Chemical mapping of a 177-nucleotide RNA with DMS and 2A3. For DMS the reverse transcriptase was MarathonRT.
RNA sequence: GGGAACGACUCGAGUAGAGUCGAAAAGAAAGAAAGAAAGAAAAGCCUAUUCAUGAUCCUUUUGCAUCGUGCAUCGUACAUGGCCUUGGCGGCACGCACAGCAAGAUGGAACGUGAAUAAGGCGCAAGCACUAUUUUGGAUUCGUCCAAAAUAGUGCAAAAGAAACAACAACAACAAC
Reactivity to DMS in 0.01 (KOAc 150mM, MgCl2 10mM, bicine 150mM(pH8.5), 24C), signal-to-noise 6, nucleotides 027 to 126: g010a070a100a100g020a100a070a070g020a100a080a090g010a080a090a130a220g000c000c000u000a040u000u000c000a000u000g010a060u000c000c000u000u000u000u000g000c000a130u010c030g020u000g000c010a070u020c040g020u010a090c050a030u010g020g000c120c170u010u010g010g010c030g000g020c090a030c060g000c160a040c150a170g010c000a000a010g010a020u040g030g010a030a050c000g030u000g000a010a000u000a030a050g020g000c010g020c190a050a090
Reactivity to 2A3 in 0.01 (KOAc 150mM, MgCl2 10mM, bicine 150mM(pH8.5), 24C), signal-to-noise 9, nucleotides 027 to 126: g070a010a050a010g110a050a040a010g110a030a130a020g120a020a140a010a000g010c000c000u000a000u000u000c000a000u000g030a090u010c000c000u000u050u000u000g010c020a040u050c070g010u010g010c010a070u090c080g080u070a270c030a130u160g160g070c040c080u060u050g050g010c000g000g000c020a000c030g020c010a040c030a030g000c000a000a000g020a040u170g010g000a040a030c000g000u000g000a000a000u050a070a060g000g000c010g000c010a020a050